About this RNA:
Chemical mapping of a 177-nucleotide RNA with DMS and 2A3. The reactions ran in a buffer of 150 mM KOAc, 10 mM MgCl2 and 150 mM bicine (pH 8.5), at 24 C. It was measured as part of the RMDB library OK1LIB. For 2A3, 18,638 sequencing reads were counted. For DMS, 6,900 sequencing reads were counted.
RNA sequence: GGGAACGACUCGAGUAGAGUCGAAAACAAAACAAUGAAACGAAUCAUGCUCAUUUUGGGCAUAGUAAAUUAACACACAUUCAACCCAAAUCAGUGACGGCGAAAUUUGAUUUAUCUUUCAUCAUUGCUACAUAUGUUGGUUCGCCAACAUAUGUAGAAAAGAAACAACAACAACAAC
Reactivity to DMS in 0.01 (KOAc 150mM, MgCl2 10mM, bicine 150mM(pH8.5), 24C), signal-to-noise 4, nucleotides 027 to 126: c070a040a070a090a130c180a070a070u020g000a050a090a080c150g000a090a070u050c130a030u000g000c010u000c000a100u020u010u030u030g010g000g010c010a000u000a050g010u010a030a040a050u000u020a050a070c150a070c160a090c100a110u000u010c100a100a100c010c010c030a090a040a080u020c090a050g000u010g010a050c080g000g000c060g010a050a030a080u040u020u010g000a040u020u000u000a030u010c050u000u000u000c030a100u000c040a070u000u000g010
Reactivity to 2A3 in 0.01 (KOAc 150mM, MgCl2 10mM, bicine 150mM(pH8.5), 24C), signal-to-noise 9, nucleotides 027 to 126: c040a010a070a010a010c050a030a050u110g060a100a060a040c110g060a020a050u090c020a010u080g000c010u010c040a160u100u110u130u260g010g000g010c020a020u020a020g040u060a010a070a090u120u150a130a020c050a010c020a010c020a120u090u100c040a060a120c010c010c000a020a060a070u110c040a040g080u040g100a050c070g030g050c050g070a040a050a080u130u080u060g050a060u010u050u110a090u070c040u020u100u060c020a050u030c010a050u030u180g030